Structure probing data (DMS and 2A3) for a 207-nucleotide construct. The 2A3 profile rests on 1,761 reads.
RNA sequence: GGGAACGACUCGAGUAGAGUCGAAAACGCACUCGCAGCUUAAUAACCUGCGCUGAGCCCUUCUCCCCCAGCUUGCCUGUGUCCUAGGGACUUGGAAGGUCAUCCUUCACAGGAUCGUGUGGAAGUCAUUACUCGUGAGUGUUCGCACUCACGAGAACUGAUAACAACGGUUCGCCGUUGUUAUCAGAAAAGAAACAACAACAACAAC
Reactivity to DMS in 0.01 (KOAc 150mM, MgCl2 10mM, bicine 150mM(pH8.5), 24C), signal-to-noise 2, nucleotides 027 to 156: c080g000c040a080c030u000c000g090c030a010g020c010u010u010a140a100u000a150a090c280c000u010g010c000g010c170u000g000a070g010c020c000c050u000u000c080u000c010c000c000c020c050a110g000c000u000u000g010c020c000u000g020u000g020u000c030c050u030a100g020g030g010a050c040u010u060g020g000a140a140g010g010u000c070a120u000c020c020u000u010c030a100c060a110g000g020a020u000c080g000u000g000u010g010g000a110a260g000u020c060a100u030u000a110c000u000c010g010u000g020a050g020u010g020u010u000c250g040c000a050c020u000c000a010c000g000a000g020a010a090
Reactivity to 2A3 in 0.01 (KOAc 150mM, MgCl2 10mM, bicine 150mM(pH8.5), 24C), signal-to-noise 3, nucleotides 027 to 156: c050g000c000a050c020u030c010g010c000a000g000c000u040u000a020a010u060a050a030c000c000u000g010c040g000c180u040g000a030g040c030c040c000u180u090c120u090c000c000c000c000c000a000g040c030u060u170g020c000c010u000g000u010g030u180c020c030u080a060g030g070g000a020c010u080u080g160g130a090a020g060g020u030c020a120u160c010c000u060u040c000a020c000a010g020g000a050u070c060g020u070g000u070g110g040a050a040g040u050c040a160u130u280a080c000u000c000g000u000g000a000g000u010g000u030u030c060g030c080a000c000u000c000a000c000g000a000g000a000a010

The RNA was probed in 150 mM KOAc, 10 mM MgCl2 and 150 mM bicine (pH 8.5) at 24 C.